[RMDB]
RNA sequence: GGGAACGACUCGAGUAGAGUCGAAAAGUGGAUAGUUUCGACUAUCCACACAACUGAUGAUCUUACAGUGGAGGAUGAAGAAGAUGGCCAUGGGAUCCUCAAAUAGCACAGAGUUCGCUCUGUGCAACUCUAUGAAGUCUUUCGAGACUUCAUAGAGAAAAGAAACAACAACAACAAC
Reactivity to DMS in 0.01 (KOAc 150mM, MgCl2 10mM, bicine 150mM(pH8.5), 24C), signal-to-noise 5, nucleotides 027 to 126: g020u000g010g000a010u000a010g010u000u000u020c170g020a050c000u000a000u000c000c000a010c000a050c140a070a060c060u000g000a060u000g020a110u010c030u000u000a100c080a050g020u010g000g010a050g010g010a070u000g000a090a090g000a080a070g010a060u000g010g000c020c030a090u000g000g010g000a070u000c020c060u000c060a070a050a080u010a120g000c000a000c010a010g010a010g020u000u010c230g010c000u000c000u000g010u000g010c000a030a040
Reactivity to 2A3 in 0.01 (KOAc 150mM, MgCl2 10mM, bicine 150mM(pH8.5), 24C), signal-to-noise 8, nucleotides 027 to 126: g000u010g010g000a010u010a000g010u010u070u110c170g030a020c010u000a000u010c000c000a000c000a000c000a010a020c030u070g020a060u040g010a030u060c020u040u160a090c060a100g040u060g050g030a030g040g010a040u100g070a070a160g050a050a030g060a080u110g060g010c010c020a030u030g030g000g030a020u030c000c000u010c010a060a100a120u150a030g010c000a000c000a000g010a000g020u060u070c160g060c070u000c000u010g000u000g000c010a000a000